[RMDB]
RNA sequence: GGGAACGACUCGAGUAGAGUCGAAAACUGCUUAACUUCGGUUAAGCAGAAAGUGAUCAAAGCCGAAAGACACCGGCAAGUGAGCGGCAGCACAAGCCGAAAAAACGGAUGACUUCGGUCAUCCGAACAAAUAGUUUUACUUCGGUAAAACUAUUUGAAAAGAAACAACAACAACAAC
Reactivity to 2A3 in 0.01 (KOAc 150mM, MgCl2 10mM, bicine 150mM(pH8.5), 24C), signal-to-noise 5, nucleotides 027 to 126: c000u000g000c010u000u010a010a010c000u040u040c090g060g000u000u000a000a000g010c000a000g000a000a000a000g040u040g040a100u070c050a060a090a030g040c030c010g080a110a090a020g160a030c020a030c050c000g010g010c020a030a040g040u040g050a040g030c020g030g000c020a020g050c030a050c020a110a030g000c000c010g030a100a060a010a000a000a000c010g000g010a000u000g010a000c020u030u060c260g060g000u000c000a000u000c000c000g000a000a000
Reactivity to DMS in 0.01 (KOAc 150mM, MgCl2 10mM, bicine 150mM(pH8.5), 24C), signal-to-noise 6, nucleotides 027 to 126: c010u000g000c000u000u000a000a010c000u000u020c190g040g000u000u000a010a010g010c000a000g000a020a050a100g010u000g000a140u000c040a040a090a130g020c020c020g010a090a100a120g010a090c120a050c130c020g010g000c020a050a150g000u000g000a070g010c040g010g000c060a070g000c060a040c110a050a250g010c010c010g020a000a040a040a040a080a110c020g010g000a010u000g000a010c000u000u010c170g020g000u000c000a000u000c000c010g000a020a050